[RMDB]
RNA sequence: GGGAACGACUCGAGUAGAGUCGAAAAUGCCAGGACUGGCACCGCCAGCCACCACAUCGCGGGCGUGCCGACCAGCAUCUCGGCCUUGACGCACGACUGUGCGCCGCAGCCUGCAACGUCUUGCUGGGCUAAAUUGUGCGUUCGCGCACAAUUUAGCAAAAGAAACAACAACAACAAC
Reactivity to 2A3 in 0.01 (KOAc 150mM, MgCl2 10mM, bicine 150mM(pH8.5), 24C), signal-to-noise 2, nucleotides 027 to 126: u080g020c010c030a050g000g030a030c150u100g000g000c010a060c030c040g000c010c000a000g000c030c020a050c070c020a040c020a140u090c100g010c020g000g020g020c010g010u040g010c000c000g010a030c000c000a000g070c020a080u040c020u040c080g000g040c000c030u070u130g030a050c020g030c010a000c040g300a290c260u300g000u000g010c010g000c000c040g000c030a000g000c020c010u040g020c050a120a100c050g030u050c030u090u080g010c010u060g000g030
Reactivity to DMS in 0.01 (KOAc 150mM, MgCl2 10mM, bicine 150mM(pH8.5), 24C), signal-to-noise 2, nucleotides 027 to 126: u020g020c010c000a130g000g030a160c130u010g000g000c020a080c130c130g030c040c010a040g010c020c030a050c070c100a110c130a090u010c120g000c050g020g000g010c040g000u010g020c000c070g020a130c030c040a150g010c070a020u010c090u000c030g020g000c030c100u040u010g000a030c010g050c000a010c040g010a110c250u000g020u000g000c010g000c030c010g010c150a080g010c010c010u000g010c060a030a130c170g000u020c110u010u000g020c000u010g010g000